Source: RMDB library M2PK50, as collected in RNAgym.
This 177-nucleotide RNA was probed chemically with 2A3 and DMS.
Values cover nucleotides 27 to 126.
Conditions: 150 mM KOAc, 10 mM MgCl2 and 150 mM bicine (pH 8.5), 24 C.

RNA sequence: GGGAACGACUCGAGUAGAGUCGAAAAGCCAUGAGUUUCGACUCAUGGCAAAAGCGCGUCAGCGCUACGAUGCAAGCGCAAGCGCGUCCAUCGAAAAUGACAAAAUUCUCGGGUUCGCCCGAGAAAAUGUGGUAUCAUAGUUCGCUAUGAUACCACAAAAAGAAACAACAACAACAAC
Reactivity to 2A3 in 0.01 (KOAc 150mM, MgCl2 10mM, bicine 150mM(pH8.5), 24C), signal-to-noise 2, nucleotides 027 to 126: g000c000c000a000u010g000a000g000u040u040u120c080g020a020c000u000c010a000u010g000g000c000a050a000a000a000g000c000g000c010g060u080c030a060g030c020g020c010u020a020c040g140a140u210g050c150a060a030g000c000g030c040a060a030g040c020g000c000g020u050c000c020a040u060c040g040a080a030a020a150u080g030a040c040a030a130a030a110u050u000c000u010c000g010g000g010u040u020c130g090c040c000c000g010a000g010a000a000a000a000
Reactivity to DMS in 0.01 (KOAc 150mM, MgCl2 10mM, bicine 150mM(pH8.5), 24C), signal-to-noise 2, nucleotides 027 to 126: g010c020c000a010u000g000a000g030u000u000u010c120g020a060c000u010c000a000u000g030g000c000a020a010a050a180g010c000g030c010g000u010c120a250g010c010g010c000u000a030c120g000a080u010g000c260a110a070g010c000g000c030a060a160g010c020g010c000g000u010c100c030a110u030c050g010a110a070a060a080u010g040a050c090a100a030a130a180u010u010c010u000c000g000g010g010u000u010c220g020c010c000c000g020a010g000a000a000a060a060